RNA sequence: GGGAACGACUCGAGUAGAGUCGAAAACGUACCGAAGCCCUUCCGAGGGGCAUCCCUGUUGGAGUCGUUUCCGGCCCCCGCCGGACUCGGUUUCAUCUUUGGUCUCCUCGCGCUAACCCCGUAGCGUUAGCAUGUUGUACUUCGGUACAACAUGCUAAAAAGAAACAACAACAACAAC
Reactivity to DMS in 0.01 (KOAc 150mM, MgCl2 10mM, bicine 150mM(pH8.5), 24C), signal-to-noise 2, nucleotides 027 to 126: c100g020u030a040c010c040g000a020a020g000c090c020c010u010u020c110c100g010a140g000g000g000g010c090a020u040c050c020c070u030g020u000u000g000g000a070g000u000c010g000u000u000u000c010c000g020g000c020c090c090c080c250g030c030c020g000g000a010c030u010c050g000g000u010u000u000c040a010u010c010u000u000u020g000g000u010c010u000c020c020u000c040g000c030g000c000u000a020a120c040c000c010c020g060u010a080g010c110g000u000
Reactivity to 2A3 in 0.01 (KOAc 150mM, MgCl2 10mM, bicine 150mM(pH8.5), 24C), signal-to-noise 3, nucleotides 027 to 126: c030g050u060a050c010c030g020a070a020g000c030c000c000u100u050c080c060g040a080g020g000g020g000c020a040u050c010c000c010u040g050u050u080g020g010a030g010u010c000g000u000u010u010c000c000g000g010c030c050c010c010c070g010c010c000g010g030a030c020u020c020g010g010u020u020u010c020a040u000c020u040u040u120g040g020u000c000u020c000c010u010c020g030c000g000c030u020a080a110c000c000c000c050g070u070a020g030c020g040u030